Notes:
The data come from the RNA Mapping Database (RMDB), library OK2TST. The record gives the reactivity of an RNA of 177 nucleotides to 2A3 and DMS. 2A3 adducts were read by reverse transcription with SuperScript II with manganese.
[RMDB]
RNA sequence: GGGAACGACUCGAGUAGAGUCGAAAAAAUGAGACUUCUAUUGCUACGAAGCACCGACGAUUUGACAGAUGUUUCCUAGCUUAUCCGCAAAAAACGGCUGGGGAGACAACCGCACAACGCGGAAAUGGCUAUUAUCUCACUUCGGUGAGAUAAUAGCAAAAGAAACAACAACAACAAC
Reactivity to 2A3 in 0.01 (KOAc 150mM, MgCl2 10mM, bicine 150mM(pH8.5), 24C), signal-to-noise 2, nucleotides 027 to 126: a000a000u160g020a050g020a040c020u030u000c010u080a080u060u120g010c030u020a030c050g040a030a020g010c020a040c040c020g120a100c020g070a130u070u030u120g070a050c050a030g090a040u060g050u000u030u000c020c000u000a010g000c000u060u100a110u170c070c040g000c060a030a070a080a050a040a090c000g020g000c000u020g010g000g040g030a010g000a010c000a000a040c010c010g040c010a020c020a270a120c130g000c010g020g120a050a060a050u080g070
Reactivity to DMS in 0.01 (KOAc 150mM, MgCl2 10mM, bicine 150mM(pH8.5), 24C), signal-to-noise 1, nucleotides 027 to 126: a030a080u000g000a190g010a110c050u000u020c060u010a110u050u000g010c060u020a090c240g020a010a030g000c030a020c120c030g010a140c050g000a090u000u000u000g000a170c130a060g010a080u010g000u000u000u000c000c000u000a020g000c000u000u000a100u020c120c060g000c110a020a030a070a110a090a080c150g000g000c050u000g010g040g000g000a060g020a050c050a020a060c010c000g000c020a070c140a030a110c060g020c010g000g000a050a030a060u010g000